This 177-nucleotide RNA was probed chemically with DMS and 2A3.
Reactivities are given for positions 27 through 126.
Conditions: 150 mM KOAc, 10 mM MgCl2 and 150 mM bicine (pH 8.5), 24 C.
2A3 adducts were read by reverse transcription with SuperScript II with manganese.
RNA sequence: GGGAACGACUCGAGUAGAGUCGAAAAAACGCUAUGUUUUAACUAUCUAACACGGAGUUGGAGUGAUUUAAAGAUCGCUUUGACGAGCCAACAAUGGAAGAGCCAACACGUGAUUUAGCUACGCAUAGGCUGUUAUUCUUUUCGAAGAAUAACAGCCAAAAGAAACAACAACAACAAC
Reactivity to DMS in 0.01 (KOAc 150mM, MgCl2 10mM, bicine 150mM(pH8.5), 24C), signal-to-noise 3, nucleotides 027 to 126: a070a080c240g020c180u000a010u000g000u000u010u020u010a070a110c010u000a010u000c030u000a020a040c010a000c000g000g020a160g000u000u000g000g000a000g000u010g020a180u040u020u020a020a000a030g000a110u010c000g000c000u020u040u000g020a010c010g000a010g010c010c020a080a120c300a130a090u020g000g010a000a010g010a120g010c010c000a000a000c020a000c010g000u000g010a060u000u000u000a010g000c040u010a050c300g000c010a030u000a020
Reactivity to 2A3 in 0.01 (KOAc 150mM, MgCl2 10mM, bicine 150mM(pH8.5), 24C), signal-to-noise 8, nucleotides 027 to 126: a000a000c070g020c080u040a010u050g090u000u040u030u030a010a010c010u000a010u060c010u060a120a020c000a000c010g040g010a250g050u010u000g040g010a050g060u220g130a250u060u120u160a020a030a040g060a150u010c010g000c020u140u090u170g020a010c010g010a010g000c000c010a100a100c100a200a170u160g010g020a050a020g150a010g280c000c000a000a000c000a000c010g020u010g000a010u000u010u010a000g000c020u020a000c040g010c010a010u010a040